[RMDB]
RNA sequence: GGGAACGACUCGAGUAGAGUCGAAAAUUAAACCGGGAGCCGAAGCGCAACGGCGACCGGAAGGGCGAGGGGAACCCGAAUCUCAACCCGGAGCCCAAGCGCAAGAGAAACGGGAAGCGCAAAAAAACUUCAUGUAUGUGUUCGCACAUACAUGAAGAAAAGAAACAACAACAACAAC
Reactivity to DMS in 0.01 (KOAc 150mM, MgCl2 10mM, bicine 150mM(pH8.5), 24C), signal-to-noise 1, nucleotides 027 to 126: u030u000a140a110a080c050c000g010g010g010a300g000c000c000g000a030a100g080c120g000c070a190a280c010g010g000c020g000a210c000c000g000g010a030a050g000g010g000c020g030a300g000g000g000g000a110a100c000c000c010g000a050a110u000c010u010c080a180a180c070c020c010g000g000a300g000c020c000c000a090a010g000c110g010c080a050a070g000a050g000a030a180a140c040g000g010g000a160a160g000c050g040c000a020a000a030a050a080a030a050

Chemical mapping of a 177-nucleotide RNA with DMS.
Conditions: 150 mM KOAc, 10 mM MgCl2 and 150 mM bicine (pH 8.5), 24 C.
DMS adducts were read by reverse transcription with MarathonRT.